Source information:
This 177-nucleotide RNA was probed chemically with DMS. For DMS the reverse transcriptase was MarathonRT.
RNA sequence: GGGAACGACUCGAGUAGAGUCGAAAAUGGAAUUAGAGGAACUGUUCUUCUUGGAUGAACUGCUAAAGGAAUAUUCGGAAACACGUCUUCAAAUCCUCCGUACCGGAAUCCACAAAGAAACAAUUCAGACCUAGAUCUCAUUCGUGAGAUCUAGGUCAAAAGAAACAACAACAACAAC
Reactivity to DMS in 0.01 (KOAc 150mM, MgCl2 10mM, bicine 150mM(pH8.5), 24C), signal-to-noise 1, nucleotides 027 to 126: u000g020g000a140a070u000u000a120g010a130g020g000a040a080c080u000g010u000u000c110u000u000c010u000u000g030g000a010u010g000a110a300c030u000g010c070u000a060a090a020g020g000a040a110u000a050u000u000c000g000g010a040a040a060c060a080c300g000u000c040u000u000c030a000a050a130u000c040c020u000c070c000g000u020a090c080c030g000g000a010a110u000c050c010a060c140a040a040a080g010a110a080a060c060a070a140u000u000c060a150